[RMDB]
Annotation:
This 177-nucleotide RNA was probed chemically with 2A3 and DMS. Source: RMDB library TTRDEL, as collected in RNAgym. Values cover nucleotides 27 to 126.
RNA sequence: GGGAACGACUCGAGUAGAGUCGAAAAGAUAUGGACGAAAGGCUUGGACCAAGUGUAUCGGAAACGAUACCUUGCUAGCCUAGUCCUAAGUCAAACGAUUAGAAGUUGUUCGCAACUUCUAAUCGAAGUAAAUUAGGCACUUCGGUGCCUAAUUUACAAAAGAAACAACAACAACAAC
Reactivity to 2A3 in 0.01 (KOAc 150mM, MgCl2 10mM, bicine 150mM(pH8.5), 24C), signal-to-noise 2, nucleotides 027 to 126: g000a000u050a020u110g000g000a000c010g150a290a200a110g000g030c070u190u240g050g110a300c130c000a050a000g040u100g010u170a000u010c000g000g000a020a010a030c000g000a000u000a000c000c000u020u020g020c030u010a010g000c000c000u000a000g000u010c000c010u000a040a000g000u030c050a080a030a130c030g000a000u010u000a020g000a000a010g000u020u000g060u020u140c300g000c120a000a000c000u000u000c020u000a010a000u010c000g020a060a000
Reactivity to DMS in 0.01 (KOAc 150mM, MgCl2 10mM, bicine 150mM(pH8.5), 24C), signal-to-noise 2, nucleotides 027 to 126: g000a020u000a280u010g000g010a030c000g020a130a150a080g030g020c000u000u000g090g000a130c270c010a000a020g000u000g030u000a010u000c000g020g000a040a050a100c000g010a000u000a000c000c000u000u000g000c040u000a030g050c000c000u000a190g000u000c000c000u010a010a110g000u000c020a080a080a290c030g000a020u000u000a000g000a020a000g020u000u000g020u000u010c250g010c020a010a010c000u000u000c000u020a000a000u000c000g000a030a040
Conditions: 150 mM KOAc, 10 mM MgCl2 and 150 mM bicine (pH 8.5), 24 C.